[RMDB]
RNA sequence: GGGAACGACUCGAGUAGAGUCGAAAAUGCUCAUCAGGAUAUGCCGGAUUUUCAAAAGCAUGCGCCAGGGCACUGACUAUGUCCCUGUCUCGGAGACGGUGGAACUGGAGCUAGAGUCAGAGCCGAGGCCUAGGCCCUCGCGCACGCCAUCACCCGGACGUUAUACAUCUUUCGAGAUGUAUAACGUAAAAGAAACAACAACAACAAC
Reactivity to DMS in 0.01 (KOAc 150mM, MgCl2 10mM, bicine 150mM(pH8.5), 24C), signal-to-noise 2, nucleotides 027 to 156: u000g000c050u010c020a150u000c060a120g000g020a110u000a070u000g030c020c000g020g010a110u000u000u000u000c080a070a080a110a040g000c000a020u010g030c040g070c020c020a090g010g020g030c050a200c040u020g010a050c020u000a150u010g020u010c000c010c010u000g020u000c000u000c100g010g010a190g010a060c050g060g020u000g050g010a070a290c060u000g010g000a050g000c010u020a100g010a090g010u000c010a080g000a080g050c060c030g010a130g030g010c030c010u000a030g010g000c000c000c020u000c140g000c060g000c020a030c020g040c010c030a090u000c080a130c010c020c000g030g000
Reactivity to 2A3 in 0.01 (KOAc 150mM, MgCl2 10mM, bicine 150mM(pH8.5), 24C), signal-to-noise 6, nucleotides 027 to 156: u090g010c030u050c080a120u070c040a070g130g040a120u110a050u230g030c010c010g040g020a050u100u100u060u170c120a090a100a010a020g000c000a010u020g000c000g010c020c030a000g000g000g000c010a020c100u040g020a030c010u040a050u230g050u030c000c000c000u000g020u000c020u030c050g150g020a130g020a070c030g010g070u200g090g040a140a070c030u080g070g030a050g070c020u050a050g020a010g100u020c020a010g010a030g080c020c050g030a070g030g020c010c000u030a020g030g010c000c000c000u000c000g000c000g000c000a000c020g000c020c020a060u080c040a070c010c020c000g010g000